[RMDB]
RNA sequence: GGGAACGACUCGAGUAGAGUCGAAAACAAAAUAAGCUACUACUAUAACUACCAAGCCGAUUAGUGCAUACUCAAAUAGUGAUGAUAAUUGCGUUAUUGGGGAUAUACUACUAGCCGUUCCUUCUUGUCCCAAUAGGUUAAGGUAAUUGCUAGCUAGAUUGACUUUGCAGUUCGCUGCAAAGUCAAUAAAAGAAACAACAACAACAAC
Reactivity to 2A3 in 0.01 (KOAc 150mM, MgCl2 10mM, bicine 150mM(pH8.5), 24C), signal-to-noise 2, nucleotides 027 to 156: c030a020a130a070a090u300a130a040g070c090u110a100c040u050a010c030u070a110u080a300a070c050u120a180c050c010a060a000g000c010c010g080a070u000u060a040g080u040g230c000a000u050a060c040u100c090a070a150a150u150a070g090u100g060a070u000g010a010u030a070a030u080u040g050c070g040u070u090a080u100u060g000g010g000g010a010u030a000u010a210c010u010a020c000u000a000g020c000c000g000u050u010c010c000u030u020c010u050u100g070u080c000c020c040a050a050u140a080g010g010u050u080a030a000g000g000u040a020a030u010u020g000c000u020a010g010c000u010a000g030
Reactivity to DMS in 0.01 (KOAc 150mM, MgCl2 10mM, bicine 150mM(pH8.5), 24C), signal-to-noise 1, nucleotides 027 to 156: c060a070a050a110a220u010a080a150g020c010u010a060c040u000a060c040u000a120u000a090a040c020u010a160c010c010a070a070g000c000c030g000a070u000u010a040g000u010g030c100a100u010a020c030u010c090a140a100a120u010a040g020u000g000a020u010g040a070u000a000a040u000u000g030c070g010u010u000a110u000u010g000g000g020g000a130u010a060u020a070c010u000a010c060u000a040g030c010c020g030u000u000c030c000u030u010c090u000u040g000u010c010c040c020a050a130u000a100g040g000u000u010a040a030g010g010u000a100a100u010u000g010c040u000a080g010c010u000a100g010